An RNA of 177 nucleotides, treated with 2A3 and read out base by base.
RNA sequence: GGGAACGACUCGAGUAGAGUCGAAAAUUGGUCUAAAGAAACCUCUUAAACUAUGACUUUGAAAUUAAUUGGCAAUAUUUCUACUUUUUGGCUUUGAUAAAAAUGCUGAUGAUUAGCAAGAGCUAAACGUUGCGAAGUGAUUCGUCACUUCGCAACGAAAAGAAACAACAACAACAAC
Reactivity to 2A3 in 0.01 (KOAc 150mM, MgCl2 10mM, bicine 150mM(pH8.5), 24C), signal-to-noise 1, nucleotides 027 to 126: u010u040g020g000u000c010u140a000a170a000g140a070a120a070c000c010u060c130u020u100a080a060a070c000u000a060u190g080a070c000u110u130u150g300a040a000a000u120u040a040a150u060u270g030g000c050a080a080u170a090u120u060u000c040u010a260c140u140u040u000u040u020g000g000c010u140u000u080g180a100u210a050a060a000a000a000u070g000c000u040g030a020u080g000a030u190u030a000g000c000a000a170g000a000g050c010u180a170a170a000

For 2A3, 412 sequencing reads were counted.